Overview: An RNA of 177 nucleotides, treated with DMS and 2A3 and read out base by base. It was measured as part of the RMDB library M2PK50. For 2A3 the reverse transcriptase was SuperScript II with manganese. The reactions ran in a buffer of 150 mM KOAc, 10 mM MgCl2 and 150 mM bicine (pH 8.5), at 24 C.

RNA sequence: GGGAACGACUCGAGUAGAGUCGAAAAUCCUCUAUCUUCGGAUAGAGGAAAAGAGCUAGCAGGUACCGGUAGCAAAGAAAAGGUACCAAGACGGAAACGUCAAAACGAAGGGGUUCGCCCCUUCGAACAUCAUCGCAUUGUUCGCAAUGCGAUGAUGAAAAGAAACAACAACAACAAC
Reactivity to DMS in 0.01 (KOAc 150mM, MgCl2 10mM, bicine 150mM(pH8.5), 24C), signal-to-noise 1, nucleotides 027 to 126: u000c000c000u000c000u000a000u010c000u000u000c170g040g000a040u000a000g010a010g010g000a000a030a030a060g000a190g000c030u000a120g000c040a230g000g000u010a000c010c000g000g020u000a010g030c030a060a120a190g000a000a050a010a150g000g020u000a000c000c000a090a050g010a010c000g000g000a090a020a160c000g030u060c010a060a070a020a160c040g000a030a000g000g000g020g000u000u040c260g000c000c000c000c000u020u000c000g050a040a130
Reactivity to 2A3 in 0.01 (KOAc 150mM, MgCl2 10mM, bicine 150mM(pH8.5), 24C), signal-to-noise 1, nucleotides 027 to 126: u010c000c000u010c000u010a010u000c010u010u030c140g090g000a020u010a010g010a050g000g000a030a050a010a040g040a030g000c020u010a000g000c100a120g000g000u000a000c010c000g010g100u020a020g000c130a160a030a010g100a010a100a020a020g000g000u010a000c010c000a010a020g000a000c020g000g020a050a060a020c010g000u000c000a030a070a010a000c030g000a020a020g050g000g010g000u060u070c180g070c020c010c000c000u000u010c000g000a000a000